[RMDB]
Annotation: Structure probing data (2A3) for a 177-nucleotide construct.
RNA sequence: GGGAACGACUCGAGUAGAGUCGAAAAAAAAAAAAGAUAUGGAUCGUAAGUUCGCUAUGAAGUGGGAAGGUGGUCGGAAACGAUGUUACAGCCCAUGGAGCGAAUAUCGAUCCUAAGUCAAAAAAAACAUAUUUGAAGAGUUCGCUCUUCAAAUAUGAAAAGAAACAACAACAACAAC
Reactivity to 2A3 in 0.01 (KOAc 150mM, MgCl2 10mM, bicine 150mM(pH8.5), 24C), signal-to-noise 1, nucleotides 027 to 126: a000a000a090a000a050a000a190a000g080a050u110a000u200g000g000a000u000c000g000u080a300a300g100u130u000c010g020c040u100a300u300g030a020a020g010u020g000g110g000a080a020g100g090u250g130g060u020c000g000g020a050a020a000c010g000a040u040g050u300u210a040c010a060g000c070c000c000a000u030g000g000a000g000c030g000a010a010u010a000u010c000g040a000u020c000c020u000a050a000g010u050c130a000a000a000a130a000a000a000a060